[RMDB]
This 177-nucleotide RNA was probed chemically with 2A3 and DMS. DMS adducts were read by reverse transcription with MarathonRT. Reactivities are rounded to 0.1 and cut off at 0 and 3. The 2A3 profile rests on 1,052 reads. The DMS profile rests on 3,998 reads. Source: RMDB library OK2TST, as collected in RNAgym. As a SHAPE reagent, 2A3 marks flexible, mostly unpaired nucleotides at the ribose 2'-OH.

RNA sequence: GGGAACGACUCGAGUAGAGUCGAAAACUCAUCGGUGGAUUUCAUCAUGACAGCUCAGUCCUUGCUCUGUUGUCCUCCCACGGACUGUUUCCCUUUUCUCAUGGGGCAGACAGAGGAGGCGGGUGGACAGAGUACGCAAAUUCGUUUGCGUACUCUGAAAAGAAACAACAACAACAAC
Reactivity to 2A3 in 0.01 (KOAc 150mM, MgCl2 10mM, bicine 150mM(pH8.5), 24C), signal-to-noise 1, nucleotides 027 to 126: c020u050c030a060u060c100g030g030u060g070g120a300u130u220u120c000a050u020c010a040u120g100a020c040a040g010c000u030c060a030g080u110c020c000u060u100g110c010u050c020u010g060u130u100g020u050c000c020u100c000c060c000a000c050g040g060a060c030u040g090u040u130u070c020c010c110u040u060u090u050c070u000c030a110u180g000g010g030g040c000a000g010a030c000a010g030a030g050g030a000g000g000c050g000g000g010u110g030g030a030
Reactivity to DMS in 0.01 (KOAc 150mM, MgCl2 10mM, bicine 150mM(pH8.5), 24C), signal-to-noise 3, nucleotides 027 to 126: c090u000c020a050u000c090g000g030u000g000g020a170u010u000u010c030a030u010c020a060u000g020a100c160a180g000c040u010c040a070g000u010c020c020u000u020g000c020u000c020u000g010u000u010g010u000c020c010u000c030c000c040a110c150g000g020a100c060u000g000u000u000u010c010c020c000u000u000u010u000c090u010c090a090u010g000g000g000g020c080a030g000a050c020a030g010a090g000g020a060g010g010c090g010g000g000u010g010g030a180